This 177-nucleotide RNA was probed chemically with DMS and 2A3. 2A3 adducts were read by reverse transcription with SuperScript II with manganese. The 2A3 profile rests on 43,344 reads. Reactivities are given for positions 27 through 126. It was measured as part of the RMDB library TTRDES. The DMS profile rests on 21,232 reads.

RNA sequence: GGGAACGACUCGAGUAGAGUCGAAAAGAUAUGGACCACACAGGGAGCUGACCAUCGGAAACGAUGGAACAGCUUUGAUCUGUAAGUGGUCCUAAGUCAAACAUGUGAGAGUUCGCUCUCACAUGAAGAUAUAAUGAAUCUUCGGAUUCAUUAUAUCAAAAGAAACAACAACAACAAC
Reactivity to DMS in 0.01 (KOAc 150mM, MgCl2 10mM, bicine 150mM(pH8.5), 24C), signal-to-noise 9, nucleotides 027 to 126: g010a010u000a040u010g000g000a020c000c000a010c020a050c000a010g000g010g000a000g040c000u000g000a300c000c000a010u000c000g010g000a020a010a030c000g010a010u000g010g000a110a080c040a020g010c000u000u000u020g000a020u000c000u010g010u000a120a130g020u000g000g010u000c000c000u000a000a080g000u000c010a190a150a300c010a000u000g010u000g000a010g000a020g020u010u020c300g010c000u000c000u000c000a000c000a000u000g000a060a090
Reactivity to 2A3 in 0.01 (KOAc 150mM, MgCl2 10mM, bicine 150mM(pH8.5), 24C), signal-to-noise 5, nucleotides 027 to 126: g000a000u020a010u050g000g000a000c000c000a010c010a000c010a020g000g020g000a010g000c010u010g010a050c000c000a010u000c000g000g010a030a000a010c000g000a000u020g000g020a040a060c000a000g010c000u040u050u000g000a000u000c010u000g040u040a300a070g010u010g010g000u000c000c000u000a000a000g000u000c010a040a070a110c010a000u000g000u010g000a000g000a010g020u100u210c300g080c130u000c000u000c000a000c000a000u000g000a010a030